Source: RMDB library M2PK50, as collected in RNAgym. Structure probing data (DMS and 2A3) for a 177-nucleotide construct. For DMS, 3,251 sequencing reads were counted. The reactions ran in a buffer of 150 mM KOAc, 10 mM MgCl2 and 150 mM bicine (pH 8.5), at 24 C. Values cover nucleotides 27 to 126. 2A3 adducts were read by reverse transcription with SuperScript II with manganese. High DMS reactivity at an A or C suggests that its Watson-Crick edge is free.

[RMDB]
RNA sequence: GGGAACGACUCGAGUAGAGUCGAAAACUGUGCAUGUUCGCAUGCACAGAAAUGCGUCACAGGCGAUUGACGCAAUAAUUAUGUUGGUAGGAUCGCCUGUGAAAAGCGGGUCCUUCGGGACCCGCAACUACUGGUGUAAGUUCGCUUACACCAGUAGAAAAGAAACAACAACAACAAC
Reactivity to DMS in 0.01 (KOAc 150mM, MgCl2 10mM, bicine 150mM(pH8.5), 24C), signal-to-noise 2, nucleotides 027 to 126: c000u000g010u000g000c000a010u000g000u000u010c250g020c000a000u000g020c000a000c000a020g010a040a100a050u000g020c190g010u010c000a020c030a020g010g020c000g010a020u000u000g000a190c130g000c000a010a000u000a060a110u010u010a100u010g010u010u000g020g000u000a060g000g000a010u000c000g020c010c000u000g010u000g000a010a020a090a060g020c000g030g010g000u010c000c000u000u020c160g010g010g010a020c000c000c000g010c000a010a030
Reactivity to 2A3 in 0.01 (KOAc 150mM, MgCl2 10mM, bicine 150mM(pH8.5), 24C), signal-to-noise 2, nucleotides 027 to 126: c000u000g000u000g000c010a010u010g010u060u080c130g000c120a000u000g010c000a000c000a010g000a000a010a020u140g020c050g070u030c000a000c010a000g010g000c010g020a000u000u040g060a040c070g050c210a000a010u090a030a040u220u300a150u260g040u020u030g070g070u090a110g170g000a000u010c000g010c000c000u000g000u000g000a000a010a010a000g020c040g000g010g030u000c020c000u040u060c140g060g030g000a000c000c000c000g000c000a000a000